[RMDB]
RNA sequence: GGGAACGACUCGAGUAGAGUCGAAAAUGAAUUGUCUUUUACUAAUUACAAGCUCCAGUCUCAGAUUGUAACUGGCCUUUUUAAAGAUUGCUCUAGAGAAACUUCUGGCCUCUCACCUGCUUAUGCACACGAGCUCCCUUCGGGGAGCUCAAAAGAAACAACAACAACAAC
Reactivity to 2A3 in 0.01 (KOAc 150mM, MgCl2 10mM, bicine 150mM(pH8.5), 24C), signal-to-noise 3, nucleotides 027 to 129: u120g020a010a060u060u080g040u020c010u030u070u080u140a040c010u090a050a110u160u050a030c070a070a050g010c060u010c010c000a030g000u030c040u050c100a080g100a230u090u130g000u020a040a000c000u010g030g000c000c000u160u130u000u030u090a090a130a120g070a110u060u130g010c000u000c010u070a020g000a050g030a100a150a010c060u050u000c010u050g020g000c070c000u000c050u000c000a030c010c000u030g090c030u160u060a040u170g090c000a020c000a000c120
Reactivity to DMS in 0.01 (KOAc 150mM, MgCl2 10mM, bicine 150mM(pH8.5), 24C), signal-to-noise 3, nucleotides 027 to 129: u020g000a130a120u000u000g050u010c040u010u000u060u000a110c100u040a060a180u050u020a100c220a150a060g020c040u070c040c040a070g040u030c070u010c050a070g000a060u060u090g010u000a000a000c110u030g020g020c240c060u000u010u000u000u000a000a060a090g010a100u030u010g030c040u000c070u050a110g030a150g000a120a080a000c090u000u040c020u010g020g000c060c030u000c050u000c040a050c020c060u080g010c150u000u070a040u100g040c080a110c150a050c080